[RMDB]
RNA sequence: GGGAACGACUCGAGUAGAGUCGAAAAGGGGUACAUUCAAGGUUGUGGCUGUAAUAAGAUAAAAGAUUGCCUAGGUAAGGGUAGAUGUUAUCUCAAUGACAUAAAAUACUCCUUCAGUCACAGGCAAUCCCUCGUAGAUAUUCGUAUCUACGAGGGAAAAAGAAACAACAACAACAAC
Reactivity to DMS in 0.01 (KOAc 150mM, MgCl2 10mM, bicine 150mM(pH8.5), 24C), signal-to-noise 4, nucleotides 027 to 126: g010g020g010g010u000a050c120a080u010u000c100a070a080g000g020u010u010g040u010g000g010c040u010g000u010a060a110u010a070a080g010a090u010a040a080a070a100g010a140u000u000g000c000c000u010a100g010g010u010a040a040g020g000g020u000a030g000a060u000g010u000u000a020u000c200u010c260a080a060u000g010a010c020a040u000a080a060a130a120u000a040c020u020c010c000u000u000c080a070g020u000c120a080c140a030g020g000c050a060a080
Reactivity to 2A3 in 0.01 (KOAc 150mM, MgCl2 10mM, bicine 150mM(pH8.5), 24C), signal-to-noise 3, nucleotides 027 to 126: g020g000g020g020u070a010c040a090u060u200c060a070a030g050g030u030u050g020u080g040g010c040u050g010u030a070a040u060a110a030g130a060u180a160a110a030a010g070a020u000u030g000c000c000u030a060g000g090u100a010a020g050g000g000u010a010g010a080u020g010u000u030a010u000c140u020c160a090a070u060g010a000c000a010u110a050a280a100a020u010a030c030u110c060c000u040u000c010a040g070u070c040a030c030a090g010g000c000a010a000